[RMDB]
RNA sequence: GGGAACGACUCGAGUAGAGUCGAAAAUAAUGCAUGUCAGGUACUAUACUAGGUACUUAACAGUAUAGCAUUUAUCUCAAUUCUGACCGGAUAUGGUGGCUCACCCCUGUAAUCCCAGCACUUUGGGAGACUGAGGCGGAUGGAUCACCUGAGGUCACCAUAAAUAAAUGUUCGCAUUUAUUUAUGGAAAAGAAACAACAACAACAAC
Reactivity to DMS in 0.01 (KOAc 150mM, MgCl2 10mM, bicine 150mM(pH8.5), 24C), signal-to-noise 2, nucleotides 027 to 156: u010a010a030u000g030c000a230u000g010u010c010a010g010g020u000a010c010u000a160u020a240c250u010a150g040g020u000a020c010u000u000a010a030c000a040g030u010a220u010a130g000c010a030u000u000u000a070u030c030u010c020a090a200u000u000c100u010g000a080c020c020g010g030a150u000a060u000g000g040u000g010g020c030u000c020a040c020c000c010c050u010g020u010a080a200u000c000c010c000a080g030c170a080c180u000u000u020g010g010g010a030g010a040c050u000g000a010g020g050c030g000g050a080u000g030g010a070u000c010a030c010c000u000g010a050g010g010u020c030a120
Reactivity to 2A3 in 0.01 (KOAc 150mM, MgCl2 10mM, bicine 150mM(pH8.5), 24C), signal-to-noise 8, nucleotides 027 to 156: u140a000a010u010g000c020a020u020g000u030c030a010g000g010u000a000c000u050a050u110a280c160u200a160g050g000u000a010c000u010u020a020a010c010a020g100u160a070u180a240g000c010a000u000u030u080a100u020c020u010c000a050a200u200u030c050u060g000a000c000c010g050g010a050u060a070u300g020g000u000g000g000c010u010c010a020c010c000c000c000u010g070u110a060a080u010c010c000c010a020g060c100a100c210u270u300u070g000g020g000a010g010a010c060u100g040a030g060g050c160g080g020a120u020g010g010a010u010c000a000c000c000u010g030a020g010g000u010c000a010
Chemical mapping of a 207-nucleotide RNA with DMS and 2A3.
DMS adducts were read by reverse transcription with MarathonRT.
In probing experiments dimethyl sulfate is read out at A N1 and C N3, which are open when not base-paired.
The data come from the RNA Mapping Database (RMDB), library OK3TST.
For 2A3, 6,759 sequencing reads were counted.
2A3 adducts were read by reverse transcription with SuperScript II with manganese.
The RNA was probed in 150 mM KOAc, 10 mM MgCl2 and 150 mM bicine (pH 8.5) at 24 C.
For DMS, 4,347 sequencing reads were counted.